[RMDB]
RNA sequence: GGGAACGACUCGAGUAGAGUCGAAAAGACAUGAUUUGUACCAACAAUGUUCAUUGAGAAACCAAGAGUUGUGCUUCCAGCCAGGAAUCCCAAAAAGAUCAUUGUGGAAAUAAAUUUAACGAUACAACGCAGGUGGUGAAUUCGUUCACCACCUGCGAAAAGAAACAACAACAACAAC
Reactivity to 2A3 in 0.01 (KOAc 150mM, MgCl2 10mM, bicine 150mM(pH8.5), 24C), signal-to-noise 1, nucleotides 027 to 126: g000a000c050a190u130g030a030u170u130u000g090u000a100c120c000a100a190c000a030a030u000g060u050u000c030a030u000u090g000a030g110a090a000a000c000c000a040a110g090a080g130u000u050g040u210g000c000u170u000c000c000a000g000c070c000a000g000g000a000a000u000c060c040c060a000a000a050a050a000g020a030u090c000a000u000u000g000u000g000g090a000a060a000u070a000a040a000u110u110u000a090a060c130g080a010u070a180c090a130a000
Source: RMDB library OK1LIB, as collected in RNAgym.
Chemical mapping of a 177-nucleotide RNA with 2A3.
The reactions ran in a buffer of 150 mM KOAc, 10 mM MgCl2 and 150 mM bicine (pH 8.5), at 24 C.
Reactivities are given for positions 27 through 126.
Reactivities are rounded to 0.1 and cut off at 0 and 3.
For 2A3 the reverse transcriptase was SuperScript II with manganese.